[RMDB]
RNA sequence: GGGAACGACUCGAGUAGAGUCGAAAAGAUAUGGACCAUUCCUGCAAGCGUUGAUCUCGGAAACGAGGGAGCUUGUCAGGAGAUGGUCCUAAGUCAAAAGAAGGCGUACCUUCGGGUACGCCUUCAAGUCUAGUUGCGUGUUCGCACGCAACUAGACAAAAGAAACAACAACAACAAC
Reactivity to DMS in 0.01 (KOAc 150mM, MgCl2 10mM, bicine 150mM(pH8.5), 24C), signal-to-noise 1, nucleotides 027 to 126: g010a020u010a300u000g000g000a020c010c000a020u000u000c000c010u020g020c000a000a020g000c010g000u000u010g000a010u000c010u010c000g000g010a160a050a280c010g010a040g000g010g000a000g030c010u000u000g010u000c000a030g010g000a050g000a000u030g010g010u000c000c000u010a000a050g010u000c050a070a100a170a180g000a000a000g010g000c000g010u000a000c010c000u040u010c280g010g020g020u010a000c000g000c000c010u010u000c000a030a080